An RNA of 177 nucleotides, treated with 2A3 and DMS and read out base by base. For 2A3 the reverse transcriptase was SuperScript II with manganese. For DMS, 38,458 sequencing reads were counted.
[RMDB]
RNA sequence: GGGAACGACUCGAGUAGAGUCGAAAACGCAAGCGGCGAAAUCGUCGAUGUUCGGCGGGCUCGUCGCGAGCGGCUGGCAUACGUGCUCGGUGUUCAUGGGCAUGCUCGUGCGCGGCGUGCUCCAGGAUGAUAAAAUAGGUUUCGACCUAUUUUAUCAAAAAGAAACAACAACAACAAC
Reactivity to 2A3 in 0.01 (KOAc 150mM, MgCl2 10mM, bicine 150mM(pH8.5), 24C), signal-to-noise 2, nucleotides 027 to 126: c010g000c010a020a020g000c000g000g010c000g010a010a000a030u050c000g010u000c000g030a080u240g280u300u200c010g000g000c000g000g000g000c000u000c000g010u000c000g000c000g000a000g000c000g010g000c080u070g020g000c020a060u070a160c110g110u060g010c020u020c040g030g020u070g030u080u070c080a140u120g010g000g000c010a010u020g010c030u060c120g130u160g070c140g010c030g050g010c020g000u020g010c020u040c030c010a050g080g030a110
Reactivity to DMS in 0.01 (KOAc 150mM, MgCl2 10mM, bicine 150mM(pH8.5), 24C), signal-to-noise 9, nucleotides 027 to 126: c020g010c020a070a300g020c010g020g000c000g000a010a050a300u010c010g020u000c010g010a110u010g010u010u000c010g020g000c010g010g000g010c300u000c010g020u000c010g010c010g010a230g010c000g000g000c080u000g000g010c050a060u000a110c110g010u000g010c020u000c030g010g010u000g010u000u000c060a130u010g000g000g010c020a030u000g000c030u000c060g020u000g010c090g010c060g010g000c010g020u000g000c030u010c010c060a070g000g010a170